[RMDB]
RNA sequence: GGGAACGACUCGAGUAGAGUCGAAAAGUGACAGAUUAUGAAGUGAUAGUAAUGUUAUCACAUUGCGGCAGUUACAUCUUAGGAAGGGAUUAUAUUUCAGUUUUGAUGCAAGUCAAACAUGAACCACCUUGAAUACGAAGUUCGCUUCGUAUUCAAGAAAAGAAACAACAACAACAAC
Reactivity to 2A3 in 0.01 (KOAc 150mM, MgCl2 10mM, bicine 150mM(pH8.5), 24C), signal-to-noise 6, nucleotides 027 to 126: g030u040g030a010c030a040g040a110u090u120a110u300g090a120a030g010u010g030a030u030a000g070u050a140a110u180g050u110u040a030u040c020a000c010a030u020u160g010c040g020g000c020a020g010u000u040a040c020a050u020c020u050u100a040g050g050a050a040g100g020g010a020u120u100a120u060a050u100u050u040c020a010g030u020u020u070u100g010a020u040g020c030a020a050g010u010c020a000a030a020c050a090u080g030a020a020c010c020a050c020
Reactivity to DMS in 0.01 (KOAc 150mM, MgCl2 10mM, bicine 150mM(pH8.5), 24C), signal-to-noise 8, nucleotides 027 to 126: g010u000g000a060c040a080g000a080u000u010a070u010g010a100a150g020u000g000a030u000a040g000u010a110a070u010g020u000u010a030u000c030a020c020a120u000u000g020c060g010g010c040a050g000u000u010a060c070a040u010c040u000u010a100g010g010a080a070g010g000g000a100u000u010a070u010a110u010u000u000c030a060g010u000u000u000u010g010a030u000g000c270a060a130g000u000c010a010a030a020c040a080u010g010a040a100c220c080a090c190
Conditions: 150 mM KOAc, 10 mM MgCl2 and 150 mM bicine (pH 8.5), 24 C. This 177-nucleotide RNA was probed chemically with 2A3 and DMS. Source: RMDB library OK2TRN, as collected in RNAgym. Values cover nucleotides 27 to 126.